[RMDB]
About this RNA
Structure probing data (2A3 and DMS) for a 177-nucleotide construct.
RNA sequence: GGGAACGACUCGAGUAGAGUCGAAAAUCGAAUGUACCUUACUACGAAGCAACCCUUAGCACAGACUAUUAUGUAGAGUCUAAGCCAAACGCAAGUAGCGCUGAUAAAGAAUUUAUCAAGGCAGGAAAGCUGAAUCUCUAUUCGUAGAGAUUCAGCUAAAAGAAACAACAACAACAAC
Reactivity to 2A3 in 0.01 (KOAc 150mM, MgCl2 10mM, bicine 150mM(pH8.5), 24C), signal-to-noise 1, nucleotides 027 to 126: u070c000g040a000a140u110g010u110a050c030c030u060u090a020c020u000a010c020g040a100a000g000c010a080a080c000c040c000u060u040a020g000c040a050c020a110g070a040c040u040a070u180u050a140u300g170u070a050g040a020g110u010c020u010a020a020g010c000c050a020a100a020c050g000c050a020a050g010u010a000g040c130g110c130u040g010a020u040a040a020a030g120a090a150u080u010u000a000u010c030a000a020g060g000c060a030g060g290a100a140
Reactivity to DMS in 0.01 (KOAc 150mM, MgCl2 10mM, bicine 150mM(pH8.5), 24C), signal-to-noise 1, nucleotides 027 to 126: u000c050g040a190a070u000g010u000a090c010c000u000u030a100c070u010a040c050g000a180a070g000c000a100a130c020c020c030u040u010a090g000c040a070c140a090g010a030c030u000a080u020u020a060u010g000u010a160g040a000g010u010c010u000a090a100g010c000c000a040a100a070c150g020c040a100a160g030u000a010g000c130g000c070u000g000a050u030a030a080a200g030a070a100u000u000u000a030u000c040a010a070g020g030c030a040g020g010a040a070
Annotation: Reactivities are given for positions 27 through 126.